Description:
The record gives the reactivity of an RNA of 177 nucleotides to DMS. The reactions ran in a buffer of 150 mM KOAc, 10 mM MgCl2 and 150 mM bicine (pH 8.5), at 24 C. Reactivities are given for positions 27 through 126.

[RMDB]
RNA sequence: GGGAACGACUCGAGUAGAGUCGAAAAGAUAUGGAAUCCCGAGGAGCAUGGACGAAUUCGGAAACGAACUAUCCAUGAACUACUCCGGCGGAUUCCUAAGUCAAACUAGUCCCUUCGGGGACUAGAACCAGAUAUGGUGGUUCGCCACCAUAUCUGGAAAAGAAACAACAACAACAAC
Reactivity to DMS in 0.01 (KOAc 150mM, MgCl2 10mM, bicine 150mM(pH8.5), 24C), signal-to-noise 2, nucleotides 027 to 126: g010a050u000a300u010g000g000a000a010u000c010c000c010g010a300g000g000a010g020c000a000u010g000g010a000c060g000a120a120u020u000c000g020g010a140a040a300c010g000a010a030c080u000a220u000c010c000a010u000g030a080a010c080u000a250c020u000c000c050g010g030c200g010g000a050u000u030c000c000u000a010a130g000u000c030a110a090a080c000u000a010g010u000c000c000c000u000u040c250g030g000g010g020a010c000u000a000g000a090a180